The data come from the RNA Mapping Database (RMDB), library TTRDES. Structure probing data (DMS and 2A3) for a 177-nucleotide construct. DMS adducts were read by reverse transcription with MarathonRT.
RNA sequence: GGGAACGACUCGAGUAGAGUCGAAAAGAUAUGGAUGUCCUAGACAUGCGACUACCUCGGAAACGAGGUACUCGCAACAGCUAGAGACAUCCUAAGUCAAAGCGUUAAGCCUUCGGGCUUAACGCAAGAUUCCUCCCCUGUUCGCAGGGGAGGAAUCAAAAGAAACAACAACAACAAC
Reactivity to DMS in 0.01 (KOAc 150mM, MgCl2 10mM, bicine 150mM(pH8.5), 24C), signal-to-noise 2, nucleotides 027 to 126: g020a020u010a040u000g030g000a030u000g010u000c000c010u000a000g000a030c090a300u020g040c000g000a010c240u000a000c000c000u010c000g010g020a000a040a050c010g020a020g020g010u000a000c030u000c000g040c000a030a020c250a160g030c000u000a010g000a180g010a010c000a000u000c010c000u000a010a070g050u000c020a150a130a210g020c000g010u000u000a000a000g000c000c000u000u030c250g010g000g030c010u000u000a010a000c010g020c010a000a010
Reactivity to 2A3 in 0.01 (KOAc 150mM, MgCl2 10mM, bicine 150mM(pH8.5), 24C), signal-to-noise 1, nucleotides 027 to 126: g000a010u020a000u040g020g000a000u000g000u000c010c000u010a000g020a010c190a270u300g000c030g000a000c020u010a000c000c000u000c010g000g000a000a010a000c000g000a000g000g010u000a000c010u010c000g050c000a020a030c110a030g000c000u000a000g090a140g000a100c000a000u000c000c000u000a010a000g000u020c060a110a130a040g000c020g000u010u010a000a010g000c010c000u070u190c300g100g000g010c000u000u000a000a000c000g000c000a000a000